[RMDB]
RNA sequence: GGGAACGACUCGAGUAGAGUCGAAAACUUAACGCCAACGACCUCGCCAUGGCAACCGCGGGGACCAGGUUCGAAGCGCACGCGGUGAACUUCAAGGAUGUCGCCUGGACGCUGGAGACGACGGCGUCGGACUACCGGAUGGCGGUCCUGACGGAGGUGGUUACGUCUUUUUCGAAAGACGUAACCAAAAAGAAACAACAACAACAAC
Reactivity to DMS in 0.01 (KOAc 150mM, MgCl2 10mM, bicine 150mM(pH8.5), 24C), signal-to-noise 1, nucleotides 027 to 156: c030u020u010a130a150c010g000c020c000a080a080c030g000a080c000c030u000c010g040c100c030a110u000g040g000c090a110a040c040c050g040c050g000g030g060g020a100c030c030a140g000g020u200u010c060g000a130a060g070c010g040c040a030c050g040c040g000g000u040g020a070a040c020u000u010c030a130a090g010g020a110u040g020u000c030g060c040c000u030g000g000a050c030g020c000u010g030g020a300g020a030c050g010a080c010g050g030c000g000u000c010g010g010a060c020u010a050c000c050g050g020a120u020g000g020c000g020g040u010c000c010u000g010a090c030g000g020a070g000g010
Reactivity to 2A3 in 0.01 (KOAc 150mM, MgCl2 10mM, bicine 150mM(pH8.5), 24C), signal-to-noise 2, nucleotides 027 to 156: c060u100u080a050a030c040g060c030c010a020a040c050g080a030c000c030u050c010g030c030c020a070u090g030g020c030a010a000c030c030g070c030g030g010g020g000a030c050c030a020g070g090u000u040c030g070a080a030g020c040g010c060a010c030g020c030g060g000u010g030a010a040c030u130u050c040a030a030g030g010a040u050g080u080c040g020c030c000u080g110g000a000c020g000c010u020g080g050a220g040a080c110g030a040c030g030g040c010g000u000c010g040g010a040c020u070a080c030c060g070g000a080u180g010g060c030g000g000u000c000c030u040g020a080c040g050g020a030g010g020